Source: RMDB library TTRINS, as collected in RNAgym. Chemical mapping of a 177-nucleotide RNA with DMS. DMS adducts were read by reverse transcription with MarathonRT.
RNA sequence: GGGAACGACUCGAGUAGAGUCGAAAAGAUAUGGAACCGUAACGCUCUUGGAUUUAUGUGGAAAACCGACUAUCGGAAACGAUAGUCGGUUUUCUCACAUUGUCAGAGCGGAUAAGGUUCCUAAGUCCAGUGCAUAAAUGUUCGCAUUUAUGCACUGAAAAGAAACAACAACAACAAC
Reactivity to DMS in 0.01 (KOAc 150mM, MgCl2 10mM, bicine 150mM(pH8.5), 24C), signal-to-noise 3, nucleotides 027 to 126: g010a070u000a300u000g000g000a020a000c000c000g000u010a140a300c010g020c000u000c010u000u020g030g010a020u010u000u000a010u000g030u000g000g000a010a000a000a000c010c000g000a040c000u000a000u000c000g000g000a120a080a230c000g000a000u000a010g020u000c000g000g010u000u000u000u000c010u020c000a000c000a000u000u000g000u000c010a030g000a000g020c000g000g010a050u010a100a230g000g000u000u000c000c000u000a030a150g010u000c050